The record gives the reactivity of an RNA of 177 nucleotides to 2A3 and DMS. The reactions ran in a buffer of 150 mM KOAc, 10 mM MgCl2 and 150 mM bicine (pH 8.5), at 24 C. For 2A3, 660 sequencing reads were counted. DMS adducts were read by reverse transcription with MarathonRT.

RNA sequence: GGGAACGACUCGAGUAGAGUCGAAAAAAAGAGAGAGAGAAUUAAGGACACUGUUGUGAGUUCAUUGUUCUUAGACUAUAUCUUUCCUACUUUAUUUUUUGGAAUGGGCUCUCGAAGGCAGUAUCAAGAUCCUUUUAAUCUUCGGAUUAAAAGGAUCAAAAGAAACAACAACAACAAC
Reactivity to 2A3 in 0.01 (KOAc 150mM, MgCl2 10mM, bicine 150mM(pH8.5), 24C), signal-to-noise 1, nucleotides 027 to 126: a030a000a030g060a000g010a000g000a000g030a010g070a120a060u030u050a010a010g010g000a000c010a000c030u050g080u250u020g160u090g160a220g090u000u040c000a010u000u020g010u040u000c000u020u030a010g020a030c010u030a030u020a070u280c000u010u000u020c000c010u010a130c020u190u290u140a300u040u160u040u010u090u070g080g030a130a030u000g000g040g000c000u010c000u000c090g000a040a000g050g000c030a020g130u150a020u300c020a020a030
Reactivity to DMS in 0.01 (KOAc 150mM, MgCl2 10mM, bicine 150mM(pH8.5), 24C), signal-to-noise 3, nucleotides 027 to 126: a010a020a020g000a060g000a080g000a080g000a070g010a110a080u010u000a020a030g010g000a010c000a010c110u000g010u010u000g020u010g010a160g020u020u010c020a010u000u000g010u000u000c010u000u000a020g010a120c080u020a090u000a120u010c020u000u010u000c000c010u000a060c160u010u010u010a020u000u010u000u000u010u010g020g010a060a050u000g010g000g000c040u000c030u000c090g010a080a050g000g020c060a060g010u010a060u000c110a070a160
Reactivities are given for positions 27 through 126.
The data come from the RNA Mapping Database (RMDB), library OK2TST.